[RMDB]
RNA sequence: GGGAACGACUCGAGUAGAGUCGAAAAAUGGUAGUUAGUCAACUCGCUAUCCUAGUUACUUUGGAGUAAUCUAAAGUGUGUGUAAACGGGCGAAAGUCUGUAAAAUACUGGGGACAUAGGGUCAACAAGAACUAGUAGACCUUCGGGUCUACUAGAACCUCCAAUAGCGUUUCGACGCUAUUGGAGGAAAAGAAACAACAACAACAAC
Reactivity to 2A3 in 0.01 (KOAc 150mM, MgCl2 10mM, bicine 150mM(pH8.5), 24C), signal-to-noise 1, nucleotides 027 to 156: a000u080g050g000u030a050g010u060u000a050g020u110c030a030a090c050u020c050g000c010u020a050u060c000c000u000a010g030u020u100a030c000u030u010u000g020g010a020g010u070a180a100u040c030u030a060a020a020g050u090g000u010g000u000g000u080a000a000a160c000g040g000g000c000g040a120a090a000g000u000c010u000g000u000a020a020a020a020u090a040c030u030g000g010g090g000a030c010a130u080a020g050g060g000u030c030a030a060c020a080a090g070a030a030c000u000a000g000u000a000g000a000c030c000u000u020c080g080g000g000u050c000u020a000c000u000a000g000a000a000

Conditions: 150 mM KOAc, 10 mM MgCl2 and 150 mM bicine (pH 8.5), 24 C. An RNA of 207 nucleotides, treated with 2A3 and read out base by base. Source: RMDB library M2RFPK, as collected in RNAgym.